[RMDB]
RNA sequence: GGGAACGACUCGAGUAGAGUCGAAAAAUAAGAGUUGAACAGGUGCAAAGUGAAUAAGUAAAUUGUGAAAGUUCAGGGUUGACCAACAACCACACCAAGAUUAUUAACUUAUCAAAUGAACAGGUACGAUUAAUCAGGUGUUCGCACCUGAUUAAUCAAAAGAAACAACAACAACAAC
Reactivity to 2A3 in 0.01 (KOAc 150mM, MgCl2 10mM, bicine 150mM(pH8.5), 24C), signal-to-noise 2, nucleotides 027 to 126: a010u060a020a000g080a020g010u060u050g060a120a080c160a300g000g000u020g000c010a160a300a000g010u000g010a000a000u010a050a000g010u020a000a000a120u300u300g200u000g120a040a040a000g010u000u010c020a010g020g000g000u010u000g030a080c090c000a060a050c000a000a010c010c020a010c000a000c010c000a050a000g020a020u030u040a040u150u060a120a050c000u020u060a030u070c050a140a030a270u160g030a050a030c020a080g130g020u170a080c090
Reactivity to DMS in 0.01 (KOAc 150mM, MgCl2 10mM, bicine 150mM(pH8.5), 24C), signal-to-noise 2, nucleotides 027 to 126: a070u000a020a060g020a120g020u000u010g000a020a010c230a010g000g010u010g030c020a010a050a020g000u000g020a020a000u000a020a040g020u010a040a020a280u000u000g010u000g000a080a250a300g000u040u000c010a000g000g000g000u000u000g000a190c180c160a100a100c010a000a000c000c000a020c010a010c010c010a000a060g000a010u010u010a130u020u010a060a040c050u000u000a010u010c020a020a110a020u020g010a050a120c110a040g010g030u000a070c240